[RMDB]
An RNA of 177 nucleotides, treated with 2A3 and DMS and read out base by base. The 2A3 profile rests on 7,383 reads. The RNA was probed in 150 mM KOAc, 10 mM MgCl2 and 150 mM bicine (pH 8.5) at 24 C.
RNA sequence: GGGAACGACUCGAGUAGAGUCGAAAACGAACGCUGGCGGCGUGCUUAACACAUGCAGGUCGAACGGAAAGGCCCUACGGGGUGCUCGAGUGGCGAACGGGUGAGUAACACGUGGGUGAUCUGCCCGAAUAUUAUUUAAAUUCGUUUAAAUAAUAUUAAAAGAAACAACAACAACAAC
Reactivity to 2A3 in 0.01 (KOAc 150mM, MgCl2 10mM, bicine 150mM(pH8.5), 24C), signal-to-noise 7, nucleotides 027 to 126: c020g040a040a000c040g000c030u050g050g000c010g010g000c050g060u030g000c020u110u150a180a010c050a010c010a110u150g020c020a010g060g050u040c020g030a070a020c010g040g050a070a030a020g050g010c000c000c000u020a040c120g040g000g000g010u060g030c010u010c020g020a040g020u060g040g030c030g020a060a020c030g030g020g000u080g070a090g020u060a070a020c020a010c100g050u090g040g060g010u030g030a130u010c020u060g020c000c010c000g010
Reactivity to DMS in 0.01 (KOAc 150mM, MgCl2 10mM, bicine 150mM(pH8.5), 24C), signal-to-noise 7, nucleotides 027 to 126: c070g010a100a100c100g030c030u010g000g030c040g000g000c040g010u020g000c050u000u020a100a100c190a160c090a080u020g020c040a060g000g020u010c030g010a110a120c090g000g000a080a080a080g000g010c010c010c010u010a090c090g010g000g000g040u000g000c020u000c030g000a140g020u010g000g010c030g020a120a110c050g000g000g000u010g000a080g000u020a060a050c060a060c060g010u020g010g000g000u050g000a090u010c040u010g000c060c000c020g000